[RMDB]
RNA sequence: GGGAACGACUCGAGUAGAGUCGAAAACAAAGUAUGCGCGCUGUUUAUCCUCACCGGGACCGAUUGACCUUGGAUAUACCACAUAGAUAGGGGAUAUAAUACAAUCGCUGCCAGUAUGCGACAGCCGCCUAUCCCUGAUAUUCGUAUCAGGGAUAGGAAAAGAAACAACAACAACAAC
Reactivity to DMS in 0.01 (KOAc 150mM, MgCl2 10mM, bicine 150mM(pH8.5), 24C), signal-to-noise 6, nucleotides 027 to 126: c080a100a090a090g010u020a050u010g010c020g010c080g010c020u000g000u010u010u030a060u020c040c020u000c130a080c070c060g000g010g000a090c210c030g010a060u010u020g000a120c040c040u010u000g000g020a190u010a040u000a090c100c100a080c140a090u020a050g000a150u060a080g000g000g000g020a120u020a030u030a060a060u010a120c110a040a050u000c040g020c110u000g000c020c030a060g010u010a050u030g010c070g000a050c050a030g010c020c100g000
Reactivity to 2A3 in 0.01 (KOAc 150mM, MgCl2 10mM, bicine 150mM(pH8.5), 24C), signal-to-noise 9, nucleotides 027 to 126: c060a010a100a020g140u120a100u160g050c040g010c010g000c020u020g060u050u080u080a070u050c010c020u040c020a040c040c040g020g010g040a040c020c030g050a070u020u120g090a100c010c030u030u080g040g000a010u040a010u030a160c030c040a080c030a110u150a070g140a070u120a080g040g010g000g030a010u030a010u040a110a100u150a070c060a030a040u040c020g010c030u030g060c010c000a050g050u110a060u150g020c020g020a010c010a010g030c000c010g010